Chemical mapping of a 207-nucleotide RNA with 2A3. The 2A3 profile rests on 640 reads.

RNA sequence: GGGAACGACUCGAGUAGAGUCGAAAAAUGACUCGAGGUUAAAUCGUUCAAUUUAACCUUUAAAAAUAGAACUUGUUGUUUCCAUGAUUGUUUUGUGAUCAAUUGGAAACAAGACAAAAAUCCACAAAACUAAAAUGUAGAAGCUGUUUGUUGUGUCAGAGAUAACUAUGUUCGCAUAGUUAUCUCUAAAAGAAACAACAACAACAAC
Reactivity to 2A3 in 0.01 (KOAc 150mM, MgCl2 10mM, bicine 150mM(pH8.5), 24C), signal-to-noise 1, nucleotides 027 to 156: a040u020g000a000c010u000c020g020a010g000g000u010u000a000a010a010u090c070g020u060u050c020a010a010u020u020u000a020a000c030c000u070u060u210a110a110a000a030a070u210a100g020a060a030c020u040u150g000u030u010g000u000u000u000c000c070a040u020g010a020u010u000g010u110u070u090u080g010u070g020a000u000c000a060a120u120u040g020g010a000a130a000c050a060a010g020a000c060a070a130a090a000a020u170c130c000a060c010a000a040a020a000c000u110a080a230a000a080u130g070u140a060g040a130a080g100c090u000g000u050u040u010g010u040u050g000u010g020u080c060
2A3 adducts were read by reverse transcription with SuperScript II with manganese.